An RNA of 177 nucleotides, treated with 2A3 and DMS and read out base by base. The 2A3 profile rests on 1,042 reads. For DMS, 1,212 sequencing reads were counted. DMS adducts were read by reverse transcription with MarathonRT. The reactions ran in a buffer of 150 mM KOAc, 10 mM MgCl2 and 150 mM bicine (pH 8.5), at 24 C.
RNA sequence: GGGAACGACUCGAGUAGAGUCGAAAAGUGUGAACUCGUAUCGUAAAGAUUUCACAUGUAGCUAAAUCAACCAGUUUAUCUCUAAUCUCUUUAACGGUAUUUUCCUCAGUGGUGAAAGUAGAACCUACAUACUUGCGAACUUCGGUUCGCAAGUAUGAAAAGAAACAACAACAACAAC
Reactivity to 2A3 in 0.01 (KOAc 150mM, MgCl2 10mM, bicine 150mM(pH8.5), 24C), signal-to-noise 2, nucleotides 027 to 126: g050u050g030u020g040a020a020c010u070c060g020u100a100u130c020g010u110a200a010a000g010a010u000u120u000c050a040c010a040u060g080u080a000g020c040u060a040a000a080u110c050a060a060c020c030a030g030u040u100u040a100u010c040u040c020u040a040a290u070c050u000c000u090u140u070a090a040c040g010g010u070a100u060u070u040u060c000c010u030c050a100g030u040g150g000u100g020a140a060a010g090u060a050g080a120a010c010c000u010a030
Reactivity to DMS in 0.01 (KOAc 150mM, MgCl2 10mM, bicine 150mM(pH8.5), 24C), signal-to-noise 2, nucleotides 027 to 126: g010u000g020u010g020a040a000c080u000c080g000u000a040u020c100g050u000a070a060a120g000a060u000u000u000c130a050c070a070u010g020u000a020g020c070u000a040a040a030u000c110a080a120c210c110a110g000u000u010u000a060u000c030u000c030u000a040a120u000c020u000c010u000u000u000a060a060c060g010g000u000a000u010u010u000u000c000c020u010c130a070g020u000g020g010u000g000a070a020a100g010u000a060g000a190a090c040c030u030a240